[RMDB]
RNA sequence: GGGAACGACUCGAGUAGAGUCGAAAACUAGUACUGAUCUCGUGAUCCAUGAGAUGAUCCAUACGUAGUACGUACCUAGCAUCACUCCAUGGUACGAUCUAUAGUAUAGAUCUGUGAUCGAUCGAUCCCGAUACCCUGAGUUCGCUCAGGGUAUCGGAAAAGAAACAACAACAACAAC
Reactivity to DMS in 0.01 (KOAc 150mM, MgCl2 10mM, bicine 150mM(pH8.5), 24C), signal-to-noise 2, nucleotides 027 to 126: c050u000a050g020u000a100c080u000g010a070u000c010u000c190g020u010g000a030u000c050c040a150u000g030a150g000a030u000g000a010u000c010c030a010u000a010c010g010u000a000g000u000a290c000g020u000a010c000c010u000a160g020c160a140u000c240a100c250u020c030c010a050u010g000g000u000a020c010g000a300u020c000u000a010u010a090g000u000a070u000a050g030a030u000c000u010g000u000g010a050u000c050g010a030u000c140g000a120u000c000
Reactivity to 2A3 in 0.01 (KOAc 150mM, MgCl2 10mM, bicine 150mM(pH8.5), 24C), signal-to-noise 1, nucleotides 027 to 126: c010u010a010g190u160a060c040u070g020a030u000c050u030c100g110u090g020a070u030c050c020a120u230g040a050g050a250u200g000a010u020c000c010a010u000a030c010g010u000a000g000u060a090c000g000u000a000c000c000u030a060g100c020a110u240c020a090c080u030c160c030a070u120g000g000u000a000c000g010a020u010c010u000a040u020a090g030u010a010u000a010g000a000u000c030u120g100u100g030a050u060c020g030a060u140c050g000a010u000c010
Overview: This 177-nucleotide RNA was probed chemically with DMS and 2A3. Conditions: 150 mM KOAc, 10 mM MgCl2 and 150 mM bicine (pH 8.5), 24 C. The DMS profile rests on 1,257 reads. 2A3 is a SHAPE reagent: it acylates the 2'-hydroxyl of flexible nucleotides of all four kinds. For DMS the reverse transcriptase was MarathonRT.